This 207-nucleotide RNA was probed chemically with 2A3. Reactivities are given for positions 27 through 156. Source: RMDB library OK3TST, as collected in RNAgym. Conditions: 150 mM KOAc, 10 mM MgCl2 and 150 mM bicine (pH 8.5), 24 C. The 2A3 profile rests on 455 reads.

[RMDB]
RNA sequence: GGGAACGACUCGAGUAGAGUCGAAAAUUCGUGCCACUACACUACAGCCUGGGUGACAAAGUGAGACCCUAUCUCAAAAAAAGAAAAUUUAUAAAUGGCCUAAUAGGCAAAUGAGAAGAUGCUCAGUAUCAUUAAUCAGUAGGAAAUCACAAAUGAACAUACUGACUCCUUUCGAGGAGUCAGUAUGAAAAGAAACAACAACAACAAC
Reactivity to 2A3 in 0.01 (KOAc 150mM, MgCl2 10mM, bicine 150mM(pH8.5), 24C), signal-to-noise 1, nucleotides 027 to 156: u100u030c040g020u010g000c000c010a050c010u080a000c060a030c030u130a030c000a010g000c060c070u060g000g020g000u040g050a060c010a020a040a040g000u060g020a010g060a050c000c000c010u030a100u040c020u000c000a000a200a080a000a000a000a000g090a050a230a010a000u240u300u060a300u150a180a190a240u060g000g060c060c000u080a110a060u150a040g000g010c000a000a030a090u060g000a010g000a030a000g010a010u050g030c000u020c030a010g000u030a050u000c010a030u050u070a130a040u070c000a000g050u090a040g100g050a000a100a100u170c130a020c040a080a140a000u260g050a100a000